[RMDB]
RNA sequence: GGGAACGACUCGAGUAGAGUCGAAAAGCUAACUUCGGUUAGCAAUACCUCCUAAGUCCACUCGAAGAACUGGGUUGGACAUGCUCUAUCGGAAACGAUAGAGCAACAGCCAACACCAGGGAGAGUGGAUAUGGACACCAAGGCGAUUCGUCGCCAAUCAUAAUAUGCGUUUCGACGCAUAUUAUGAAAAAGAAACAACAACAACAAC
Reactivity to 2A3 in 0.01 (KOAc 150mM, MgCl2 10mM, bicine 150mM(pH8.5), 24C), signal-to-noise 8, nucleotides 027 to 156: g010c000u000a000a000c000u070u090c260g100g000u010u000a000g010c010a010a010u070a050c000c000u020c010c000u070a140a040g040u000c000c000a010c010u010c010g290a300a080g030a080a050c010u010g000g010g030u000u000g010g020a050c010a030u020g000c010u010c000u000a000u010c010g040g040a110a080a090c010g000a000u000a000g000a000g000c000a000a000c020a000g000c000c000a030a020c150a300c060c000a000g000g010g010a040g000a000g030u000g000g000a000u000a000u000g000g000a020c020a030c130c110a110a140g010g000c000g020a030u050u090c250g050u010c000g170c000c010a000a020
Reactivity to DMS in 0.01 (KOAc 150mM, MgCl2 10mM, bicine 150mM(pH8.5), 24C), signal-to-noise 2, nucleotides 027 to 156: g000c000u000a010a020c010u000u010c300g050g030u000u000a000g010c010a070a090u000a150c080c060u000c010c000u000a140a260g030u000c000c000a030c000u000c000g000a130a160g030a150a220c000u000g020g020g030u010u000g030g010a000c050a200u000g020c000u000c000u000a030u030c000g030g000a160a120a260c000g030a010u000a000g000a040g010c000a000a010c070a190g000c030c000a000a040c010a140c010c070a010g000g010g010a190g010a060g070u000g000g040a010u010a030u000g010g000a100c160a110c020c050a070a150g020g000c050g010a120u000u000c220g010u000c020g000c020c000a030a300

Source: RMDB library RNAMAK, as collected in RNAgym. The record gives the reactivity of an RNA of 207 nucleotides to 2A3 and DMS. In probing experiments dimethyl sulfate is read out at A N1 and C N3, which are open when not base-paired. The RNA was probed in 150 mM KOAc, 10 mM MgCl2 and 150 mM bicine (pH 8.5) at 24 C. Values cover nucleotides 27 to 156.